[RMDB]
RNA sequence: GGGAACGACUCGAGUAGAGUCGAAAAGAUAUGGACCCACGCGGAGCGCUGACCCACCGAUGAAACGUUCAGGCUCGGAAACGAGCCUGAACGUGGAGGUGCAGCGGAACCUGUGGGUCCUAAGUCACUGUGACUAUAAGUUCGCUUAUAGUCACAGAAAAGAAACAACAACAACAAC
Reactivity to DMS in 0.01 (KOAc 150mM, MgCl2 10mM, bicine 150mM(pH8.5), 24C), signal-to-noise 2, nucleotides 027 to 126: g010a080u010a300u000g030g010a000c000c010c000a030c030g040c270g010g000a290g000c030g020c010u000g000a250c120c110c070a090c080c040g010a180u010g020a130a200a000c020g000u020u010c000a000g010g030c000u010c000g000g000a020a080a180c010g040a020g030c020c000u000g000a000a000c000g000u000g020g010a080g030g020u000g030c030a000g000c010g000g010a060a050c020c010u000g000u000g010g000g000u000c000c000u000a030a060g000u000c030a270
Reactivity to 2A3 in 0.01 (KOAc 150mM, MgCl2 10mM, bicine 150mM(pH8.5), 24C), signal-to-noise 2, nucleotides 027 to 126: g040a010u080a040u120g000g000a000c020c100c000a010c000g080c290g020g030a130g230c060g000c010u020g140a280c090c120c070a080c040c080g200a300u260g140a180a150a000c010g000u040u000c020a020g000g000c000u040c120g020g010a160a080a000c030g000a010g040c000c000u000g000a000a060c020g010u010g000g020a020g000g010u070g030c000a010g030c050g030g040a050a080c000c000u080g010u010g010g000g020u010c000c000u000a000a000g000u000c010a000
Source: RMDB library TTRINS, as collected in RNAgym. This 177-nucleotide RNA was probed chemically with DMS and 2A3. The RNA was probed in 150 mM KOAc, 10 mM MgCl2 and 150 mM bicine (pH 8.5) at 24 C. For DMS the reverse transcriptase was MarathonRT.